[RMDB]
The data come from the RNA Mapping Database (RMDB), library M2PK90.
An RNA of 177 nucleotides, treated with DMS and 2A3 and read out base by base.
For 2A3 the reverse transcriptase was SuperScript II with manganese.
RNA sequence: GGGAACGACUCGAGUAGAGUCGAAAAGAAAAGCACGGCAAGCACAUGAAGCACAUGAAGCAGUACAAGCAGAACAAGCACAUGAAGCACUACAAGCAGUAGAAGCAGCCGAAGCACAUGAAAAAAAGAUACUAGUAGGUUUCGACCUACUAGUAUCAAAAGAAACAACAACAACAAC
Reactivity to DMS in 0.01 (KOAc 150mM, MgCl2 10mM, bicine 150mM(pH8.5), 24C), signal-to-noise 4, nucleotides 027 to 126: g000a050a040a130a100g030c030a030c080g000g010c060a070a080g020c080a110c070a040u010g010a090a070g010c060a050c060a050u000g000a090a060g010c030a040g000u000a070c100a060a080g010c010a030g010a060a050c120a080a090g010c040a050c080a070u000g010a040a050g000c050a080c040u010a020c080a060a070g000c060a050g000u000a050g020a090a070g020c030a060g020c030c020g000a060a070g010c000a040c080a060u000g000a010a010a060a060a050a080a140
Reactivity to 2A3 in 0.01 (KOAc 150mM, MgCl2 10mM, bicine 150mM(pH8.5), 24C), signal-to-noise 3, nucleotides 027 to 126: g090a000a060a010a000g040c030a010c040g000g010c030a030a030g030c010a030c010a080u070g040a070a010g000c030a020c000a100u060g050a040a010g000c020a000g010u040a040c030a070a040g010c010a000g030a080a020c030a070a010g010c010a030c000a050u080g040a070a030g010c030a030c050u060a010c030a080a030g070c050a010g040u080a010g020a100a010g030c030a010g010c010c000g030a020a010g010c010a030c000a090u130g100a080a060a000a000a000a010a060
Reactivities are given for positions 27 through 126.
The reactions ran in a buffer of 150 mM KOAc, 10 mM MgCl2 and 150 mM bicine (pH 8.5), at 24 C.